[RMDB]
RNA sequence: GGGAACGACUCGAGUAGAGUCGAAAAUUGACAACUUCGGUUGUCAAAUCAGUCGGGCGGACGGUGCCGUCGCCAACCCGGUCAGGUCCGGAAGGAAGCAGCCGCAACGAUUUCGUAUCGGGUCGUUCCGGCACGGGCGGAUCAUUCGUGAUCCGCCACAUAUUAGUUUCUUCGGAAACUAAUAUGUAAAAGAAACAACAACAACAAC
Reactivity to DMS in 0.01 (KOAc 150mM, MgCl2 10mM, bicine 150mM(pH8.5), 24C), signal-to-noise 2, nucleotides 027 to 156: u000u000g000a000c000a010a010c010u000u000c300g030g020u000u000g010u000c010a010a020a090u000c100a070g020u000c040g030g000g040c030g020g040a090c000g010g020u010g030c040c090g050u000c010g000c000c010a070a090c080c070c000g050g020u000c040a300g000g020u000c010c020g030g020a150a160g020g050a100a140g030c030a140g000c030c020g020c040a060a110c030g000a050u000u000u000c010g020u000a270u000c000g010g000g000u000c000g010u010u000c010c000g010g020c030a040c060g000g030g000c020g000g010a010u000c010a140u000u000c270g050u000g000a010u000c000c020g020c000c010
Reactivity to 2A3 in 0.01 (KOAc 150mM, MgCl2 10mM, bicine 150mM(pH8.5), 24C), signal-to-noise 3, nucleotides 027 to 156: u010u010g000a000c000a000a000c010u040u030c210g110g000u010u000g000u000c000a000a000a010u080c010a010g140u080c090g130g000g110c040g060g010a070c030g080g090u130g120c110c030g040u050c020g010c020c020a040a030c020c010c010g000g020u060c020a040g020g040u000c000c010g040g100a070a050g030g000a020a000g030c000a010g030c000c020g050c090a110a080c030g030a030u110u300u140c060g040u300a070u020c000g000g000g020u010c000g000u000u000c000c000g000g000c010a000c010g010g010g000c010g000g000a000u010c010a010u030u110c150g120u050g010a000u000c010c000g000c000c000
An RNA of 207 nucleotides, treated with DMS and 2A3 and read out base by base. For 2A3 the reverse transcriptase was SuperScript II with manganese. DMS (dimethyl sulfate) methylates the pairing face of unpaired adenines and cytosines. The 2A3 profile rests on 3,081 reads. It was measured as part of the RMDB library ARCHII.